[RMDB]
Structure probing data (DMS) for a 177-nucleotide construct. The reactions ran in a buffer of 150 mM KOAc, 10 mM MgCl2 and 150 mM bicine (pH 8.5), at 24 C.
RNA sequence: GGGAACGACUCGAGUAGAGUCGAAAACUUAUUAUGUUGGCGGUAACGAUUGUGGUGCAGUUGUAUUUGUCACUGACCAAGCAUGGCCGCCGGAUGUAUGCCAUCGGUGGGAAUCCAGAAGCGGCGCUGCUUGGACACCUUUCGAGGUGUCCAAGCAAAAAGAAACAACAACAACAAC
Reactivity to DMS in 0.01 (KOAc 150mM, MgCl2 10mM, bicine 150mM(pH8.5), 24C), signal-to-noise 1, nucleotides 027 to 126: c040u010u000a080u010u010a070u010g020u010u000g000g000c070g020g030u010a060a100c090g000a150u000u020g040u010g000g010u010g020c010a030g000u030u030g030u000a120u000u020u010g010u000c030a010c050u010g010a160c040c010a020a060g010c070a100u000g010g010c000c000g000c010c040g000g030a040u000g000u020a050u000g030c070c000a060u000c150g000g030u000g020g000g000a130a130u000c030c020a100g000a090a120g020c060g020g000c030g030c160